Structure probing data (2A3) for a 177-nucleotide construct.
The 2A3 profile rests on 452 reads.
Conditions: 150 mM KOAc, 10 mM MgCl2 and 150 mM bicine (pH 8.5), 24 C.
Values cover nucleotides 27 to 126.
The data come from the RNA Mapping Database (RMDB), library OK1LIB.
RNA sequence: GGGAACGACUCGAGUAGAGUCGAAAACAGAAAAAUCUUGGCCUAACAAGCUUGUUGAACUCUCCAUGCCAUACAGUAACGUUGAAAAGCUUUGGGAUGGCCCACAGCAACAUGCAAAACAACAAAACGCAGAUGUAGUCUUCGGACUACAUCUGCGAAAAGAAACAACAACAACAAC
Reactivity to 2A3 in 0.01 (KOAc 150mM, MgCl2 10mM, bicine 150mM(pH8.5), 24C), signal-to-noise 2, nucleotides 027 to 126: c070a010g190a070a120a000a020a080u080c100u050u170g090g000c010c000u030a120a030c050a040a040g030c020u050u070g030u000u020g040a070a040c000u040c000u000c000c070a020u210g080c000c010a050u190a050c070a070g070u050a000a090c090g000u030u090g050a120a190a030a000g000c030u050u090u060g000g000g130a150u300g030g130c000c040c000a020c010a000g000c000a000a040c000a040u070g090c100a000a050a170a130c120a120a000c040a200a040a000a000